This 207-nucleotide RNA was probed chemically with 2A3.
RNA sequence: GGGAACGACUCGAGUAGAGUCGAAAAUCAUCAAGAAGUAGGCUUAGGCCAAUUGCUUGGUGGUGAAACUAGAGGGAAGGUAGCACUUCGACGCCUCUAAGUACGCUGUGGGAGUAGUGCUUAAAUCAAAAGCACAGCGACUUCGGUCGCUGUGCAACCACGAGUAAUGCUUCGGCAUUACUCGUGGAAAAGAAACAACAACAACAAC
Reactivity to 2A3 in 0.01 (KOAc 150mM, MgCl2 10mM, bicine 150mM(pH8.5), 24C), signal-to-noise 1, nucleotides 027 to 156: u030c040a010u000c000a010a000g020a120a030g110u100a030g000g000c010u120u120a150g100g060c020c000a060a020u000u050g010c000u020u020g000g000u000g000g040u010g030a050a020a000c010u010a040g010a020g060g040g040a090a030g080g000u040a030g070c040a050c110u070u070c040g060a080c080g100c010c000u000c030u050a060a030g060u010a030c050g010c080u050g010u100g020g050g030a060g030u070a000g020u030g000c020u080u050a110a100a060u110c100a030a080a070a000g040c000a000c000a010g000c000g000a000c010u040u020c140g070g000u030c000g020c000u010g030u010g000c000a000a000